Record summary: The data come from the RNA Mapping Database (RMDB), library M2RFPK. An RNA of 207 nucleotides, treated with 2A3 and DMS and read out base by base. For DMS, 1,832 sequencing reads were counted. For DMS the reverse transcriptase was MarathonRT. Reactivities are given for positions 27 through 156.

RNA sequence: GGGAACGACUCGAGUAGAGUCGAAAAACCUUAUUUUGAGAAGCUGAGGGAUUUGGCCCAUAGAAGCUUCAGCAACCGACUUUAAAUAGCACGGUGCUAAUACCAACGACCAACUCGAAUGAUAAGUAAAACGUUGACAAGUUCGCUUGUCAACGAAGUAAACAAUACCGUUCGCGGUAUUGUUUACAAAAGAAACAACAACAACAAC
Reactivity to 2A3 in 0.01 (KOAc 150mM, MgCl2 10mM, bicine 150mM(pH8.5), 24C), signal-to-noise 3, nucleotides 027 to 156: a000c090c000u160u080a300u030u150u130u130g090a060g000a010a000g000c010u010g010a030g000g000g030a050u010u030u070g020g000c030c000c000a050u140a130g030a020a010g000c000u000u000c010a000g010c000a000a020c010c000g050a010c020u100u090u240a090a260a300u160a160g010c010a010c070g000g000u000g000c000u010a000a030u030a120c010c000a020a060c050g060a070c010c030a070a040c040u050c080g080a100a080u120g100a050u030a180a000g060u070a050a100a060a070c020g000u000u000g000a000c000a010a000g010u020u080c220g100c110u000u000g000u000c000a000a000c000g000a000a000
Reactivity to DMS in 0.01 (KOAc 150mM, MgCl2 10mM, bicine 150mM(pH8.5), 24C), signal-to-noise 1, nucleotides 027 to 156: a080c030c020u020u040a220u010u000u030u000g020a070g000a120a180g000c010u000g020a030g000g030g010a170u010u000u000g000g010c000c000c040a180u000a130g010a300a070g030c040u000u000c020a080g040c020a050a020c010c000g010a040c000u000u000u000a120a100a150u030a020g030c020a040c000g020g040u000g030c010u010a040a100u010a070c020c070a060a160c030g000a020c010c020a130a010c010u000c020g010a100a110u000g010a120u010a060a100g000u010a040a070a040a220c010g030u000u000g010a040c010a030a010g010u000u010c300g030c010u000u000g000u000c010a000a000c010g010a010a050